[RMDB]
Source: RMDB library 15KLIB, as collected in RNAgym. The record gives the reactivity of an RNA of 170 nucleotides to DMS and 2A3. Reactivities are given for positions 27 through 129. For 2A3 the reverse transcriptase was SuperScript II with manganese. High 2A3 reactivity points to a flexible backbone, as in loops and unpaired stretches. The DMS profile rests on 34,981 reads. The reactions ran in a buffer of 150 mM KOAc, 10 mM MgCl2 and 150 mM bicine (pH 8.5), at 24 C.
RNA sequence: GGGAACGACUCGAGUAGAGUCGAAAAGAUGCUAGGAGUCGGGGGAAGCCAGAACGACUGGGAAAGGAAAGAAAGCAACGGGGCUAGCUGCCGGGUGUUCCAUCCAUGGGAUCGGUGCCGAGUGAGGGAGGGCCUAUGUUCGCAUAGGCCAAAAGAAACAACAACAACAAC
Reactivity to DMS in 0.01 (KOAc 150mM, MgCl2 10mM, bicine 150mM(pH8.5), 24C), signal-to-noise 8, nucleotides 027 to 129: g040a060u000g030c110u020a070g050g010a080g050u030c060g010g020g040g000g050a080a120g000c000c040a020g000a090a090c080g040a070c060u000g020g020g020a020a020a020g020g030a030a020a020g030a050a040a040g000c060a110a070c050g020g010g010g010c050u030a100g030c000u020g020c060c030g000g040g010u030g000u010u000c050c020a080u040c040c070a110u000g020g000g020a060u020c070g050g020u000g060c040c020g020a030g040u050g020a080g030g000g010a080g000
Reactivity to 2A3 in 0.01 (KOAc 150mM, MgCl2 10mM, bicine 150mM(pH8.5), 24C), signal-to-noise 5, nucleotides 027 to 129: g020a020u130g000c050u060a020g010g040a030g010u060c040g000g000g010g010g010a030a020g020c000c010a030g020a090a030c070g060a030c050u030g000g050g000a030a090a020g030g040a030a010a020g060a030a100a010g060c030a020a070c050g000g000g060g000c020u020a030g020c010u040g050c040c010g020g000g010u060g010u060u020c010c020a040u030c040c030a080u140g050g000g020a040u070c020g010g010u040g000c000c010g030a030g020u110g010a050g000g020g000a040g030